Background: An RNA of 177 nucleotides, treated with DMS and read out base by base. Values are in units of 0.01, from 0 to 300, in steps of 10. It was measured as part of the RMDB library TTRINS.
[RMDB]
RNA sequence: GGGAACGACUCGAGUAGAGUCGAAAAGAUAUGGAGCGCGUAAGAGCUGAUGACCCUCAUGGUGAAACUAUAUCGGAAACGAUAUAGGAGUACGCCAUGAGGCAAGGCUCUUGAUCGCUCCUAAGUCCACAUCAAGGCACUUCGGUGCCUUGAUGUGAAAAGAAACAACAACAACAAC
Reactivity to DMS in 0.01 (KOAc 150mM, MgCl2 10mM, bicine 150mM(pH8.5), 24C), signal-to-noise 1, nucleotides 027 to 126: g020a030u000a070u010g030g000a040g010c000g020c300g060u010a010a010g000a040g000c010u020g010a120u020g000a040c300c000c000u000c000a000u000g010g010u020g010a230a160a170c000u000a000u000a010u000c000g020g000a030a000a080c000g010a030u000a030u000a000g020g010a080g040u010a100c230g050c010c000a000u010g010a010g000g020c000a020a010g040g030c000u000c000u000u010g000a150u000c040g040c010u010c000c000u020a000a040g000u010c000